[RMDB]
RNA sequence: GGGAACGACUCGAGUAGAGUCGAAAAGUUUCGGUCGUGGUUUCGCCGGUGUCGACGUGCUGAUCUUCGACGAGGCGCAGAUUCUCACCGAGAACGCGAUAGACGACAUGGUGCCCGCGACGAACGCGGCACCUAACCCGCUCAUCAUCCUGGCUGGCAUACUAAGACGUUUCGACGUCUUAGUAUGAAAAGAAACAACAACAACAAC
Reactivity to 2A3 in 0.01 (KOAc 150mM, MgCl2 10mM, bicine 150mM(pH8.5), 24C), signal-to-noise 4, nucleotides 027 to 156: g020u030u010u030c020g000g010u020c050g000u040g090g070u010u000u040c010g000c020c020g030g090u180g010u030c050g000a050c040g050u090g050c110u140g050a150u040c020u070u090c080g060a060c020g000a060g010g000c020g000c020a010g010a050u230u040c010u010c030a030c010c020g020a040g060a050a030c030g000c030g030a010u040a090g060a030c030g010a000c030a090u140g000g000u010g030c050c100c010g000c010g030a200c110g030a270a020c040g010c000g000g000c000a000c000c000u000a010a030c000c010c000g000c020u060c030a110u030c000a030u020c010c020u020g050g000c040u060g030g000
Reactivity to DMS in 0.01 (KOAc 150mM, MgCl2 10mM, bicine 150mM(pH8.5), 24C), signal-to-noise 2, nucleotides 027 to 156: g010u010u010u000c010g020g030u020c030g000u010g000g060u010u020u000c040g030c030c010g040g000u000g020u000c010g000a060c030g030u010g000c110u020g000a140u000c010u010u000c040g030a120c030g000a220g030g010c020g030c100a030g000a080u000u000c030u000c030a140c020c000g000a110g000a040a070c060g010c020g010a060u000a040g020a070c020g010a050c060a090u000g010g010u000g010c080c020c020g040c020g020a160c200g000a120a120c040g030c050g020g010c000a010c020c010u010a010a030c080c040c000g040c020u000c060a080u000c040a140u010c040c040u000g000g060c010u000g020g000

The record gives the reactivity of an RNA of 207 nucleotides to 2A3 and DMS.
DMS adducts were read by reverse transcription with MarathonRT.
For 2A3, 3,740 sequencing reads were counted.
Values cover nucleotides 27 to 156.